Record summary:
The record gives the reactivity of an RNA of 177 nucleotides to DMS and 2A3. The 2A3 profile rests on 35,854 reads. 2A3 adducts were read by reverse transcription with SuperScript II with manganese.

RNA sequence: GGGAACGACUCGAGUAGAGUCGAAAAGGUAGCCACUUCGGUGGCUACCAAAGAGAUAGUACCUAUUGACUUCCUGUGUAGGUACUCAUGACAGGAUGUCAAAAACAUGAUUCUUCGGAAUCAUGAACAAAUAUACCAUGUUCGCAUGGUAUAUUUGAAAAGAAACAACAACAACAAC
Reactivity to DMS in 0.01 (KOAc 150mM, MgCl2 10mM, bicine 150mM(pH8.5), 24C), signal-to-noise 9, nucleotides 027 to 126: g010g020u000a000g010c000c000a010c000u000u010c190g040g020u000g010g010c000u000a000c000c000a000a030a080g000a160g010a140u000a050g010u000a110c010c010u000a160u000u000g000a060c060u000u000c000c000u000g010u000g010u010a040g010g010u010a070c160u010c100a060u010g010a030c010a050g000g000a060u000g010u000c010a030a040a060a100a190c010a010u000g000a010u000u000c000u000u010c180g020g000a020a000u000c000a000u000g000a110a170
Reactivity to 2A3 in 0.01 (KOAc 150mM, MgCl2 10mM, bicine 150mM(pH8.5), 24C), signal-to-noise 9, nucleotides 027 to 126: g000g000u000a000g010c000c000a010c010u040u060c190g100g000u000g000g010c000u000a000c000c000a000a000a000g020a000g000a020u060a070g030u040a040c010c010u030a100u040u070g030a030c010u030u020c010c010u020g010u020g060u130a040g050g060u120a140c060u040c040a080u210g050a010c010a010g040g040a060u070g010u020c010a010a010a000a040a030c010a000u000g000a010u010u010c010u030u060c230g100g000a000a000u000c000a000u010g010a010a010